[RMDB]
RNA sequence: GGGAACGACUCGAGUAGAGUCGAAAAGAUAUGGAGGACCUGAAGGCGCGAUCGAACACGAAAGGUACGUCGGAAACGACGUAUACUCGUGUUCGAUCGAACUACGCUUAAGGGUCCUCCUAAGUCACGGUGUAUGUACGUUCGCGUACAUACACCGAAAAGAAACAACAACAACAAC
Reactivity to DMS in 0.01 (KOAc 150mM, MgCl2 10mM, bicine 150mM(pH8.5), 24C), signal-to-noise 1, nucleotides 027 to 126: g030a030u060a300u000g000g000a050g060g030a000c000c000u000g000a300a120g000g020c010g060c050g000a000u000c000g010a000a000c000a000c000g030a010a060a010g000g000u030a010c010g000u000c010g000g000a100a130a300c000g060a000c010g010u000a000u000a000c040u000c000g010u000g070u000u000c010g000a010u000c010g000a050a020c130u010a230c020g020c020u000u050a080a300g000g000g000u020c000c040u010c000c020u000a000a070g000u000c020a160